[RMDB]
RNA sequence: GGGAACGACUCGAGUAGAGUCGAAAACUUUGUCGAAUCGAUUCGAUCGAGGGUAAUCAUUAACGGUGUGACAGCGAGGUCCGAAUGGGAUGUGGACAAAUCUUUGUUACAAUCCUUGUCCAUGACACGUCGUCCGUGGAUUCGUCCACGGACGACGAAAAGAAACAACAACAACAAC
Reactivity to DMS in 0.01 (KOAc 150mM, MgCl2 10mM, bicine 150mM(pH8.5), 24C), signal-to-noise 1, nucleotides 027 to 126: c070u010u000u000g030u010c070g020a070a120u000c040g000a110u010u010c060g010a060u000c090g030a010g000g040g050u000a110a120u000c010a130u020u010a050a100c130g000g020u000g000u010g010a090c090a040g000c080g030a050g010g010u010c030c110g020a070a110u000g030g030g000a110u000g020u000g030g010a000c030a000a050a080u010c150u020u000u030g030u010u000a040c080a080a080u020c030c030u000u000g010u000c020c020a080u030g000a090c140a090
Reactivity to 2A3 in 0.01 (KOAc 150mM, MgCl2 10mM, bicine 150mM(pH8.5), 24C), signal-to-noise 1, nucleotides 027 to 126: c030u140u000u250g130u060c030g030a010a030u110c080g050a120u030u020c010g060a070u000c010g030a000g100g000g000u130a070a090u080c040a060u070u050a000a080c030g010g020u000g020u070g080a040c010a000g000c010g010a020g010g060u050c060c050g060a040a030u130g040g010g030a030u090g040u030g080g020a000c030a000a060a010u110c060u060u150u070g120u070u090a020c020a100a090u040c000c000u010u070g010u000c030c030a100u050g030a050c030a030